[RMDB]
RNA sequence: GGGAACGACUCGAGUAGAGUCGAAAAAUGAUCCAGGACGAAAUUUGAAAGAACUACAUGGUUCUCCAUGAAUUAAUACAUAUUGUUUAGCAAAUUCAGGAACUAUAAAACUACUACAAUGAUCUAUCGACAUACCAUCUAUCAAACAAAAUUUGGGAGAGAGUAGGGAUUUCGAUCCCUACUCUCUAAAAGAAACAACAACAACAAC
Reactivity to 2A3 in 0.01 (KOAc 150mM, MgCl2 10mM, bicine 150mM(pH8.5), 24C), signal-to-noise 1, nucleotides 027 to 156: a000u040g010a000u010c000c000a020g080g000a010c040g000a000a070a070u070u130u100g100a140a210a200g070a080a000c010u100a020c030a080u130g020g000u080u040c010u000c080c030a080u010g080a000a000u080u070a050a000u060a050c010a040u230a010u140u060g050u090u070u050a020g060c050a070a070a070u030u020c000a000g010g020a020a030c020u000a010u120a210a170a070a030c010u070a010c000u010a010c110a150a010u070g010a000u000c020u100a100u020c020g020a000c000a020u100a110c000c000a010u080c010u110a060u040c020a110a050a050c010a010a110a110a170u000u110u060g020g070g000